[RMDB]
This 207-nucleotide RNA was probed chemically with DMS and 2A3.
Source: RMDB library RNAMAK, as collected in RNAgym.
The DMS profile rests on 22,692 reads.
Conditions: 150 mM KOAc, 10 mM MgCl2 and 150 mM bicine (pH 8.5), 24 C.
RNA sequence: GGGAACGACUCGAGUAGAGUCGAAAACGGUCCUUUCGAGGACCGAGGAAUCCUAAGUCCUACGACGAUCGACCAUAAAGUCGACGAUCUAUCGGAAACGAUAGGGAGACUGUGGUCGGGAGUAGGAUAUGGAAGUGCGGACAGUUUCGACUGUCAAAGUAUGCAAAAAAUUCGUUUUUUGCAUACUAAAAGAAACAACAACAACAAC
Reactivity to DMS in 0.01 (KOAc 150mM, MgCl2 10mM, bicine 150mM(pH8.5), 24C), signal-to-noise 5, nucleotides 027 to 156: c030g020g010u000c000c000u000u000u020c230g020a040g030g010a010c020c000g000a010g010g010a160a110u000c010c000u000a100a300g010u000c000c010u000a020c010g020a130c140g010a090u010c000g020a030c000c000a030u000a060a120a040g010u000c000g020a100c160g000a050u000c000u000a010u000c000g020g010a200a130a250c010g010a020u000a020g010g000g000a070g010a020c010u000g010u000g010g010u000c000g000g010g000a070g010u000a020g000g010a010u000a030u010g010g010a060a170g030u000g000c030g000g000a030c010a030g020u000u000u000c210g010a120c010u000g010u000c010a050a120
Reactivity to 2A3 in 0.01 (KOAc 150mM, MgCl2 10mM, bicine 150mM(pH8.5), 24C), signal-to-noise 8, nucleotides 027 to 156: c010g000g000u000c010c000u040u070u100c210g120a040g000g000a000c000c000g000a030g010g110a080a080u030c010c000u030a110a040g020u000c000c000u020a030c000g220a050c010g020a150u020c000g000a000c000c000a020u200a130a290a010g000u000c010g020a300c000g000a030u000c000u000a000u000c000g070g000a100a040a030c010g000a000u000a000g000g010g000a010g000a000c000u000g000u010g020g010u000c000g000g000g000a010g000u000a000g010g010a000u010a010u040g010g020a060a080g110u130g250c130g100g010a010c000a000g000u030u130u270c170g180a040c010u010g000u000c000a000a010